Chemical mapping of a 177-nucleotide RNA with DMS. DMS (dimethyl sulfate) methylates the pairing face of unpaired adenines and cytosines. Source: RMDB library M2PK90, as collected in RNAgym. The RNA was probed in 150 mM KOAc, 10 mM MgCl2 and 150 mM bicine (pH 8.5) at 24 C. Values cover nucleotides 27 to 126.
[RMDB]
RNA sequence: GGGAACGACUCGAGUAGAGUCGAAAAUACAAGUAGGGGGGACGGAGAAGGCUAUGUUGGCCGGGCGACGGUUGUCCCGGUUUAAGCGUGUAGGCUGGUUUUCCAGGCAAAUCCGGAAGAAAAUGAACCUUAACUUAGCGUUCGCGCUAAGUUAAGGAAAAGAAACAACAACAACAAC
Reactivity to DMS in 0.01 (KOAc 150mM, MgCl2 10mM, bicine 150mM(pH8.5), 24C), signal-to-noise 1, nucleotides 027 to 126: u000a100c130a030a070g010u000a060g030g000g010g000g010g000a070c080g000g000a030g000a110a070g020g000c040u000a030u010g010u010u000g030g020c000c010g010g000g000c300g020a060c140g000g000u010u000g010u020c000c000c000g020g010u000u000u010a050a080g010c050g000u000g000u010a070g010g010c000u010g000g000u010u010u010u000c010c010a160g000g000c040a040a130a100u000c010c010g010g010a060a070g020a050a030a060a060u010g000a090a180